[RMDB]
RNA sequence: GGGAACGACUCGAGUAGAGUCGAAAAAGUUCGCGCUUCCGUGAAACGCGAAAAUCGGACGGUGGCUGCAAGUCGCAUCGCAAAACCGCGGCAAGUGGAGUUAGCGAGGGGAGGCUGGGUUUUGGCUAGAACACACGGUACUUCGGUACCGUGUGAAUGUUGCUAACAGAUUCGUCUGUUAGCAACAAAAAGAAACAACAACAACAAC
Reactivity to DMS in 0.01 (KOAc 150mM, MgCl2 10mM, bicine 150mM(pH8.5), 24C), signal-to-noise 1, nucleotides 027 to 156: a100g010u010u000c000g040c010g010c020u000u000c050c240g040u010g000a020a050a020c000g030c010g030a020a030a080a060u000c040g040g020a110c060g000g040u010g030g000c030u040g020c000a050a160g030u000c000g030c030a140u000c080g000c040a050a040a120a150c040c110g040c030g030g030c080a060a100g000u010g010g010a180g000u000u010a100g020c040g000a080g040g000g000g000a100g030g010c050u000g040g040g020u000u010u010u010g020g030c000u000a140g030a070a150c000a010c000a010c020g020g000u000a010c000u000u000c300g020g040u000a000c010c010g000u000g010u000g000a010a100
Reactivity to 2A3 in 0.01 (KOAc 150mM, MgCl2 10mM, bicine 150mM(pH8.5), 24C), signal-to-noise 2, nucleotides 027 to 156: a000g060u030u060c030g000c010g010c100u050u000c010c100g110u060g060a110a030a010c010g000c020g050a080a000a020a080u160c010g020g050a030c010g050g050u060g040g000c030u010g000c090a100a000g020u030c040g020c070a040u070c010g000c090a120a120a050a040c080c070g010c000g080g000c090a120a050g070u110g060g020a030g060u080u150a020g000c010g010a030g000g020g020g000a070g010g000c050u040g000g000g010u120u070u080u120g030g000c030u040a040g060a170a010c000a000c000a000c000g000g000u000a000c000u020u090c120g090g000u000a010c000c010g000u000g000u000g000a000a000

Conditions: 150 mM KOAc, 10 mM MgCl2 and 150 mM bicine (pH 8.5), 24 C. An RNA of 207 nucleotides, treated with DMS and 2A3 and read out base by base. For 2A3 the reverse transcriptase was SuperScript II with manganese. Reactivities are given for positions 27 through 156. DMS (dimethyl sulfate) methylates the pairing face of unpaired adenines and cytosines.